[RMDB]
RNA sequence: GGGAACGACUCGAGUAGAGUCGAAAAUAGGUCGUGUUCGCACGACCUAAGAUAAAAUGCAUAAAAUGCCUGUAACCCGAAACACAAGGGAGUGCACCUGGCCUACGAUGUCGUUCGCGACAUCGAAGACUAACGCAUGUUUCGACAUGCGUUAGUCAAAAGAAACAACAACAACAAC
Reactivity to DMS in 0.01 (KOAc 150mM, MgCl2 10mM, bicine 150mM(pH8.5), 24C), signal-to-noise 3, nucleotides 027 to 126: u000a000g010g020u000c010g020u010g010u000u000c190g050c000a020c000g010a010c000c000u020a000a000g000a140u000a070a060a080a060u000g000c030a060u020a020a050a070a250u000g020c010c050u000g000u020a090a140c010c020c010g000a090a080a100c160a070c080a050a080g000g000g000a030g010u000g000c070a050c070c050u000g000g010c030c030u000a060c020g000a020u000g000u000c010g010u010u020c200g010c010g000a020c000a000u000c000g000a030a070
Reactivity to 2A3 in 0.01 (KOAc 150mM, MgCl2 10mM, bicine 150mM(pH8.5), 24C), signal-to-noise 4, nucleotides 027 to 126: u040a000g010g000u000c000g000u010g020u030u060c200g020c050a010c020g000a000c010c000u000a010a010g010a010u120a010a110a030a040u100g000c010a000u110a140a220a080a080u130g020c000c010u060g030u100a120a090c020c000c020g040a090a190a000c100a010c040a100a060g040g010g000a050g040u030g010c010a030c040c020u020g060g030c000c020u020a040c020g000a000u010g020u010c000g010u010u050c220g000c010g070a010c000a010u010c010g010a040a010